The data come from the RNA Mapping Database (RMDB), library 15KREP.
Chemical mapping of a 177-nucleotide RNA with DMS.
Values cover nucleotides 27 to 126.
[RMDB]
RNA sequence: GGGAACGACUCGAGUAGAGUCGAAAAAAAAAGGUAAAACAGCCUGUGGGGGAAACACACCCACAGGGCCCAUUGGGCGCUAGCACUCUGGUAUCACGGUACCUUUGUGCGCCUGUUUUACCAAAAAGAUUAAGAUAAAGUUCGCUUUAUCUUAAUCAAAAGAAACAACAACAACAAC
Reactivity to DMS in 0.01 (KOAc 150mM, MgCl2 10mM, bicine 150mM(pH8.5), 24C), signal-to-noise 1, nucleotides 027 to 126: a050a070a070a150a050g020g020u000a020a010a010a020c000a010g020c000c000u010g030u020g010g000g010g000g000a100a060a170c170a080c110a060c000c000c020a000c000a000g010g000g000c010c000c000a000u000u000g020g000g010c010g000c000u010a060g050c000a010c010u010c000u000g010g030u000a010u000c030a050c300g010g010u000a000c010c000u000u000u000g000u000g020c010g000c010c010u000g000u000u000u000u000a000c000c020a030a020a050a120a020

Notes: For DMS, 1,478 sequencing reads were counted. DMS adducts were read by reverse transcription with MarathonRT. The reactions ran in a buffer of 150 mM KOAc, 10 mM MgCl2 and 150 mM bicine (pH 8.5), at 24 C.